[RMDB]
RNA sequence: GGGAACGACUCGAGUAGAGUCGAAAACCAAGAAGCAGUUAGGACUGCUCCAACCUACUGACAAUUCUACAACUGUUAGUGUUACUGUAUCCAGUAACAUGGUUGAAACUGUUGUGGGUCAACUUGAAAACCGGUGUCUUCGGACACCGGAAAAGAAACAACAACAACAAC
Reactivity to 2A3 in 0.01 (KOAc 150mM, MgCl2 10mM, bicine 150mM(pH8.5), 24C), signal-to-noise 3, nucleotides 027 to 129: c000c020a040a010g220a070a000g000c000a000g000u000u140a010g090g130a050c020u020g000c030u000c020c010a030a080c000c020u040a020c080u000g070a050c030a060a150u210u000c010u000a000c000a010a010c020u000g020u050u110a020g000u010g000u030u010a000c000u000g110u210a240u130c140c000a020g000u010a020a000c000a020u020g020g060u100u210g000a010a000a010c040u020g020u010u000g020u000g010g030g000u000c010a020a060c070u060u110g110a060a130a000a050
Reactivity to DMS in 0.01 (KOAc 150mM, MgCl2 10mM, bicine 150mM(pH8.5), 24C), signal-to-noise 1, nucleotides 027 to 129: c020c000a100a120g120a000a000g030c000a080g000u050u070a100g010g130a190c060u030g020c020u000c020c060a150a060c050c000u010a060c000u090g050a040c040a140a130u030u110c050u000a070c200a060a000c020u000g030u040u050a110g010u060g000u040u000a000c010u230g020u160a180u050c220c060a050g010u040a000a020c000a000u010g000g000u050u140g040a160a230a030c110u050g010u000u020g000u000g000g000g040u030c050a000a000c180u140u080g050a040a060a060a030
Notes:
Chemical mapping of a 170-nucleotide RNA with 2A3 and DMS. DMS adducts were read by reverse transcription with MarathonRT. The 2A3 profile rests on 3,187 reads. For DMS, 4,030 sequencing reads were counted. Conditions: 150 mM KOAc, 10 mM MgCl2 and 150 mM bicine (pH 8.5), 24 C. Values cover nucleotides 27 to 129.